[RMDB]
RNA sequence: GGGAACGACUCGAGUAGAGUCGAAAAAAAUCCAUCAAAUGCGAUACUCGAACGCAGAAGAAUAUUUUUCUGCACUGAAAUGUUUGAAUUCCAUUUUGUUGGAGUAUUUGUUUUAGAUAUGAAUCUCCCAAAAUUUAUCCUUCGGGAUAAAUUUUGGAAAAGAAACAACAACAACAAC
Reactivity to 2A3 in 0.01 (KOAc 150mM, MgCl2 10mM, bicine 150mM(pH8.5), 24C), signal-to-noise 1, nucleotides 027 to 126: a010a000a020u000c000c000a000u010c010a060a000a000u050g030c070g020a030u030a080c080u000c010g000a010a000c070g000c000a000g000a040a000g000a170a010u170a120u300u130u040u020u040c000u010g030c020a080c100u100g040a070a080a200u160g000u000u000u000g050a030a170u060u000c000c010a000u000u030u030u170g020u000u000g000g000a000g030u030a160u000u020u080g070u030u140u020u080a070g010a120u160a130u300g050a130a170u010c020u040c000
Chemical mapping of a 177-nucleotide RNA with 2A3. Reactivities are given for positions 27 through 126. The reactions ran in a buffer of 150 mM KOAc, 10 mM MgCl2 and 150 mM bicine (pH 8.5), at 24 C. 2A3 adducts were read by reverse transcription with SuperScript II with manganese.